[RMDB]
RNA sequence: GGGAACGACUCGAGUAGAGUCGAAAAGAUAUGGAAUGGGCUGCUUUUGACGAAGUCGUGAUCGGAAACGAUCAAAGUCUUCGAUAAGCAGCCAUUCCUAAGUCAAACUGUAGCUUCGGCUACAGAAGCUUUAACCGUAGUUCGCUACGGUUAAAGCAAAAGAAACAACAACAACAAC
Reactivity to 2A3 in 0.01 (KOAc 150mM, MgCl2 10mM, bicine 150mM(pH8.5), 24C), signal-to-noise 3, nucleotides 027 to 126: g020a020u060a050u170g010g050a020a000u030g180g300g100c010u010g030c030u070u130u180u280g210a190c100g010a000a000g010u030c030g110u060g000a000u000c000g000g020a060a060a060c030g000a000u000c030a080a020a090g020u020c000u010u000c010g060a090u050a120a000g000c000a000g000c000c000a000u010u020c000c000u010a020a010g010u020c020a070a070a110c010u010g000u000a000g020c000u080u050c300g140g020c000u000a000c010a000g020a010a020
Reactivity to DMS in 0.01 (KOAc 150mM, MgCl2 10mM, bicine 150mM(pH8.5), 24C), signal-to-noise 2, nucleotides 027 to 126: g010a020u000a300u020g000g000a020a010u010g010g020g050c000u000g010c000u020u000u000u000g020a260c150g000a010a020g000u000c040g010u000g010a000u000c000g000g000a130a130a220c000g020a010u010c000a160a060a170g010u000c000u000u000c010g000a150u010a010a020g000c000a010g000c010c000a000u000u000c000c000u000a030a100g000u000c020a120a150a250c000u000g000u000a010g000c000u000u020c300g040g020c000u000a010c020a000g000a140a140